[RMDB]
RNA sequence: GGGAACGACUCGAGUAGAGUCGAAAAGUAUUAAGAUAUGGAGUGUGCAGAGCUCGGAUAAGUACGAAGAACUCGGAAACGAGGGAGUACGUAACGAGCGACGAAGCACACUCCUAAGUCGGAGGAACACUGAACUAGGGUUCGCCCUAGUUCAGUGAAAAGAAACAACAACAACAAC
Reactivity to DMS in 0.01 (KOAc 150mM, MgCl2 10mM, bicine 150mM(pH8.5), 24C), signal-to-noise 2, nucleotides 027 to 126: g000u020a050u010u000a200a120g000a030u000a300u000g000g000a000g020u000g020u020g040c000a040g000a090g010c000u010c010g020g000a100u010a080a140g010u010a000c000g010a100a160g000a070a210c000u000c020g020g010a090a060a150c000g000a020g000g020g000a090g010u000a010c000g000u000a050a220c000g020a000g010c000g000a050c220g000a080a100g000c000a000c000a000c000u000c010c020u000a020a090g000u000c020g000g000a160g010g000a040a150
Reactivity to 2A3 in 0.01 (KOAc 150mM, MgCl2 10mM, bicine 150mM(pH8.5), 24C), signal-to-noise 1, nucleotides 027 to 126: g040u060a120u300u150a160a110g000a050u090a050u100g000g000a000g010u040g000u000g000c010a020g000a010g050c010u010c000g020g000a010u000a000a010g000u010a000c020g130a300a040g020a080a040c000u000c020g010g000a070a020a040c000g000a000g000g000g010a040g020u000a010c000g000u010a000a040c010g000a000g030c010g030a010c000g030a010a000g000c000a000c000a000c000u010c000c000u000a010a020g010u000c030g050g050a070g120g100a130a040